An RNA of 177 nucleotides, treated with DMS and 2A3 and read out base by base. For DMS, 7,867 sequencing reads were counted. Conditions: 150 mM KOAc, 10 mM MgCl2 and 150 mM bicine (pH 8.5), 24 C. DMS adducts were read by reverse transcription with MarathonRT. The 2A3 profile rests on 3,613 reads. Source: RMDB library TTRINS, as collected in RNAgym. Reactivities are given for positions 27 through 126.
RNA sequence: GGGAACGACUCGAGUAGAGUCGAAAAGAUAUGGAGUGAUACAACUCGCUACAGCGUUGAAAUUGGACCUGUAUCGGAAACGAUACAGGUCCAAUGGAGCUGUAGUCGAGAUAUCACUCCUAAGUCACACUUAAUAAACGUUCGCGUUUAUUAAGUGAAAAGAAACAACAACAACAAC
Reactivity to DMS in 0.01 (KOAc 150mM, MgCl2 10mM, bicine 150mM(pH8.5), 24C), signal-to-noise 4, nucleotides 027 to 126: g020a050u000a300u010g000g000a020g020u000g000a000u000a010c100a160a080c000u010c000g010c000u000a010c000a000g010c000g010u000u030g010a090a180a030u000u000g000g000a010c000c000u000g010u000a010u000c000g000g000a140a100a250c010g010a010u000a000c000a000g000g000u000c000c000a000a000u000g010g010a100g020c000u000g000u000a000g000u010c020g030a020g010a160u000a000u000c000a000c000u000c000c000u000a000a050g000u000c040a300
Reactivity to 2A3 in 0.01 (KOAc 150mM, MgCl2 10mM, bicine 150mM(pH8.5), 24C), signal-to-noise 1, nucleotides 027 to 126: g010a010u050a060u210g010g000a020g000u000g000a010u030a060c230a300a150c190u000c000g000c010u000a000c000a010g000c020g300u300u110g070a060a100a040u020u030g000g000a010c030c040u040g000u000a000u010c010g000g040a140a040a000c000g000a000u000a010c010a000g000g000u000c000c000a000a000u010g010g000a010g000c000u000g020u000a000g010u040c000g000a000g010a000u010a000u000c000a010c000u030c010c000u010a040a030g010u000c010a010